Record summary
Conditions: 150 mM KOAc, 10 mM MgCl2 and 150 mM bicine (pH 8.5), 24 C. The record gives the reactivity of an RNA of 207 nucleotides to DMS and 2A3. DMS adducts were read by reverse transcription with MarathonRT. 2A3 is a SHAPE reagent: it acylates the 2'-hydroxyl of flexible nucleotides of all four kinds. It was measured as part of the RMDB library OK3TST. Reactivities are given for positions 27 through 156.

RNA sequence: GGGAACGACUCGAGUAGAGUCGAAAAAUUAUCUUUUAUUGGAACUGAUUUACAAUGGAAGGUAAAUGCAAAUUUGCACCAUGUAUUAUUCUGAAGUUCCAAACAUCUGUGAUGAAUACAAGCCUGUACUAUAAGACCCAGUCACAUUGAAAAUAUGCUUACCAACAUAGUUCGCUAUGUUGGUAAGAAAAGAAACAACAACAACAAC
Reactivity to DMS in 0.01 (KOAc 150mM, MgCl2 10mM, bicine 150mM(pH8.5), 24C), signal-to-noise 2, nucleotides 027 to 156: a130u000u000a040u000c030u010u000u000u010a220u020u030g020g020a050a300c110u000g000a170u000u000u000a020c020a060a040u020g030g000a050a070g000g020u000a000a030a050u000g000c150a030a120a170u000u000u000g010c000a300c000c020a070u020g020u000a030u000u000a090u000u000c080u000g020a100a080g020u000u010c020c000a080a050a050c050a080u000c050u000g030u000g050a020u030g010a080a110u020a080c080a050a060g000c030c000u000g000u000a180c150u010a090u020a020a070g000a080c020c020c020a150g000u010c050a020c020a070u000u000g000a100a030a060a090u000a080u030g000
Reactivity to 2A3 in 0.01 (KOAc 150mM, MgCl2 10mM, bicine 150mM(pH8.5), 24C), signal-to-noise 3, nucleotides 027 to 156: a000u100u060a140u100c040u020u160u050u130a060u090u040g000g000a000a010c010u020g030a090u040u020u080a050c070a170a110u020g010g070a070a120g130g010u060a010a010a010u050g040c020a040a090a200u060u070u050g000c010a020c020c000a010u000g000u010a080u100u020a080u220u120c060u110g070a070a000g000u000u000c000c000a000a030a010c040a030u000c050u060g020u020g050a060u020g070a190a040u070a110c060a090a080g010c010c070u080g030u080a080c010u060a050u020a170a030g010a020c040c010c000a020g030u040c010a010c020a090u090u150g090a030a100a010a050u210a020u210g020